[RMDB]
RNA sequence: GGGAACGACUCGAGUAGAGUCGAAAACAGAUGGGGUUUUUCUGUGCAACCAAUUUUAAGGGUUUUCAAUACUUUAAAACACAUACAUACCAACACUUCAACGCACCUUUCAGCAACUAAAAUAAAAGUACAGCCCAUGAUUCGUCAUGGGCUGUACAAAAGAAACAACAACAACAAC
Reactivity to 2A3 in 0.01 (KOAc 150mM, MgCl2 10mM, bicine 150mM(pH8.5), 24C), signal-to-noise 3, nucleotides 027 to 126: c030a000g040a050u120g000g050g020g000u120u000u000u020u000c000u020g070u030g000c050a020a100c000c000a050a040u010u020u040u140a090a000g000g040g050u180u000u030u050c100a120a050u100a200c040u060u140u270a040a090a060a010c090a040c060a020u290a120c020a030u090a080c060c000a000a070c010a010c090u130u110c040a120a080c010g010c000a000c040c000u110u080u150c040a080g000c000a020a140c080u090a030a020a120a240u260a010a190a040a000